[RMDB]
RNA sequence: GGGAACGACUCGAGUAGAGUCGAAAAGAAAGAAAGAAAGAAGCCCUGCCUGGGGGCUGCCGCAAGGCGCUAUCAGGACGUGGAUUAGUCGGGCAGUGCCACGGUUCGAGAAAACCCCGACAGCCAAGACCGACUCUUUAUUCGUAAAGAGUCGGUCAAAAGAAACAACAACAACAAC
Reactivity to 2A3 in 0.01 (KOAc 150mM, MgCl2 10mM, bicine 150mM(pH8.5), 24C), signal-to-noise 1, nucleotides 027 to 126: g040a020a110a010g080a000a100a020g060a100a140a030g060a080a020g020c000c000c000u000g000c000c000u010g060g000g010g010g000c040u050g000c000c000g040c040a030a030g000g000c000g000c020u020a020u070c000a000g000g000a000c010g000u000g000g040a010u020u000a010g000u000c010g010g040g000c140a000g010u010g020c010c000a010c010g030g050u140u100c030g000a000g060a050a030a000a000c000c000c000c000g010a000c000a000g110c090c010a040a000

Overview:
This 177-nucleotide RNA was probed chemically with 2A3. Conditions: 150 mM KOAc, 10 mM MgCl2 and 150 mM bicine (pH 8.5), 24 C.